[RMDB]
RNA sequence: GGGAACGACUCGAGUAGAGUCGAAAACGUGAUCAUCGACCACGGUACGCACGGCUUGCGAUUCAAAUUGGAAUGGAGUGAUUGCAUUCAUUGUGUGGUCCUCUGUGGGUUGAAAGGGGCUUGGGACGGAAGGCGCGUGAUGCAGGGGGAUAAUGUGAGGUAGUACUAUGUUCGCAUAGUACUACCUAAAAGAAACAACAACAACAAC
Reactivity to DMS in 0.01 (KOAc 150mM, MgCl2 10mM, bicine 150mM(pH8.5), 24C), signal-to-noise 2, nucleotides 027 to 156: c030g000u000g000a060u000c010a200u000c130g010a060c020c020a060c010g000g030u000a070c040g030c000a090c070g000g010c020u000u000g020c000g010a110u010u000c060a030a300a160u020u020g010g000a130a160u000g000g010a080g040u010g020a060u000u010g020c020a040u000u010c130a160u010u030g010u000g040u000g000g000u010c030c020u000c030u000g010u010g020g040g030u000u000g000a070a060a120g020g020g030g040c080u000u000g010g010g000a080c040g020g010a060a060g040g010c050g020c030g020u000g010a080u010g010c050a120g000g010g020g020g010a070u010a030a100u000g030u000g010
Reactivity to 2A3 in 0.01 (KOAc 150mM, MgCl2 10mM, bicine 150mM(pH8.5), 24C), signal-to-noise 7, nucleotides 027 to 156: c020g030u040g030a060u060c050a020u050c080g050a060c010c010a020c020g030g020u080a030c040g000c010a020c030g030g000c040u030u050g010c020g050a040u070u080c100a100a130a130u120u140g110g060a080a090u090g080g020a050g060u160g030a020u010u040g000c010a000u020u090c030a060u230u140g010u000g000u030g060g020u030c010c020u020c030u040g040u060g010g040g030u040u090g070a100a080a000g000g010g000g010c040u070u060g020g030g020a040c060g020g010a050a010g050g010c050g010c030g060u060g020a040u140g010c040a040g000g010g050g000g010a010u090a100a080u250g080u130g050